Chemical mapping of a 177-nucleotide RNA with 2A3 and DMS. High DMS reactivity at an A or C suggests that its Watson-Crick edge is free. For DMS, 794 sequencing reads were counted.

[RMDB]
RNA sequence: GGGAACGACUCGAGUAGAGUCGAAAACUGGGCAACAUAGUGAGACUUCAUCUCCACAAAAAUUUAAAAAAAAAUUAGCCAUUUGUGGUGGUACACACCUGUAGUCCCAGCUGCUCAAGAGGCUAAGCUUAUGACAGUACUUCGGUACUGUCAUAAGAAAAGAAACAACAACAACAAC
Reactivity to 2A3 in 0.01 (KOAc 150mM, MgCl2 10mM, bicine 150mM(pH8.5), 24C), signal-to-noise 1, nucleotides 027 to 126: c000u020g000g030g030c030a050a040c020a090u160a090g040u080g030a040g000a090c040u130u050c050a030u000c030u060c040c000a020c010a030a080a040a110a060u190u300u260a270a070a050a040a010a000a000a000a030u000u030a010g020c020c000a080u040u060u010g020u000g030g000u030g050g000u020a090c030a010c000a020c070c030u050g070u090a070g050u070c000c000c000a000g000c040u030g000c010u020c030a030a000g090a050g110g000c020u000a090a000g010
Reactivity to DMS in 0.01 (KOAc 150mM, MgCl2 10mM, bicine 150mM(pH8.5), 24C), signal-to-noise 1, nucleotides 027 to 126: c010u000g010g000g020c020a090a070c030a010u000a080g000u000g010a130g020a110c170u000u010c150a070u010c020u000c050c010a050c020a020a030a030a120a070u050u010u000a150a000a000a000a040a050a110a200a160u000u000a100g020c060c040a270u000u010u020g080u010g000g000u020g020g000u020a090c140a080c020a010c160c060u000g010u000a050g010u000c000c000c010a100g030c090u010g010c010u000c110a030a060g010a080g000g000c000u000a030a080g000